RNA sequence: GGGAACGACUCGAGUAGAGUCGAAAAGAUAUGGAUUAAGCAUCCGUCGCGAGAGACAUGGAAGAGGCGUCGGAAACGACGCUACCCACCUUCAAUGUGGAAUGCGACGGAUGCUUAAUCCUAAGUCCAUUGGUCAUGUGUUCGCACAUGACCAAUGAAAAGAAACAACAACAACAAC
Reactivity to DMS in 0.01 (KOAc 150mM, MgCl2 10mM, bicine 150mM(pH8.5), 24C), signal-to-noise 2, nucleotides 027 to 126: g010a040u000a300u000g000g020a010u000u000a000a020g000c010a010u000c020c010g020u000c000g000c000g000a090g070a300g000a020c000a010u020g000g000a010a030g010a090g020g000c000g020u030c000g030g000a150a130a260c020g010a010c030g000c000u000a020c080c030c190a300c170c000u000u000c010a150a010u000g010u010g000g010a230a210u000g020c010g000a000c000g000g030a010u000g000c000u000u000a010a000u000c010c000u000a000a100g000u040c060

The record gives the reactivity of an RNA of 177 nucleotides to DMS. The reactions ran in a buffer of 150 mM KOAc, 10 mM MgCl2 and 150 mM bicine (pH 8.5), at 24 C.